The record gives the reactivity of an RNA of 207 nucleotides to 2A3 and DMS. For 2A3, 2,525 sequencing reads were counted. The reactions ran in a buffer of 150 mM KOAc, 10 mM MgCl2 and 150 mM bicine (pH 8.5), at 24 C. It was measured as part of the RMDB library OK3TST. Reactivities are given for positions 27 through 156.

[RMDB]
RNA sequence: GGGAACGACUCGAGUAGAGUCGAAAAGUUCGUUGGUCCAGCACAGUCGACCGCCCCGUCGCGAGCAGAAGGGCGGCAGCACGUCCAACAGACGUUCGUCUGGAGGGUCGGCGUCGAUCACGAAUAUGGCCGGCAGGAGGCGACUGUCAAAGUAGGACCUAUAGAGCAUAUUCGUAUGCUCUAUAGGAAAAGAAACAACAACAACAAC
Reactivity to 2A3 in 0.01 (KOAc 150mM, MgCl2 10mM, bicine 150mM(pH8.5), 24C), signal-to-noise 3, nucleotides 027 to 156: g020u060u140c090g010u030u000g000g040u030c010c010a020g000c100a010c000a010g010u010c010g040a300c050c000g040c050c010c000c000g020u020c030g020c090g030a150g100c020a020g020a110a070g020g010g000c020g010g000c010a000g010c020a050c050g020u020c010c000a020a020c000a020g000a000c050g210u260u290c150g000u080c010u010g010g010a070g010g050g000u070c000g000g000c010g000u010c000g020a200u080c040a060c290g040a090a010u110a100u090g090g050c000c000g010g000c030a020g020g020a000g000g000c000g000a010c000u000g010u000c000a000a070a080g050u070a140g050g020a000
Reactivity to DMS in 0.01 (KOAc 150mM, MgCl2 10mM, bicine 150mM(pH8.5), 24C), signal-to-noise 1, nucleotides 027 to 156: g030u000u000c170g030u000u000g010g010u000c000c000a180g030c080a080c010a000g000u000c010g040a010c010c000g030c030c010c020c010g020u000c050g010c100g000a170g110c040a200g040a220a190g020g000g030c000g000g000c000a100g040c070a240c000g000u000c010c000a040a300c040a040g000a010c070g040u010u000c060g030u000c010u030g010g000a290g000g030g020u000c020g020g000c020g020u000c040g050a060u000c030a080c060g010a100a070u010a240u000g060g040c010c030g000g010c030a070g030g010a290g020g000c000g000a040c020u000g010u020c080a110a040a110g000u000a160g000g000a130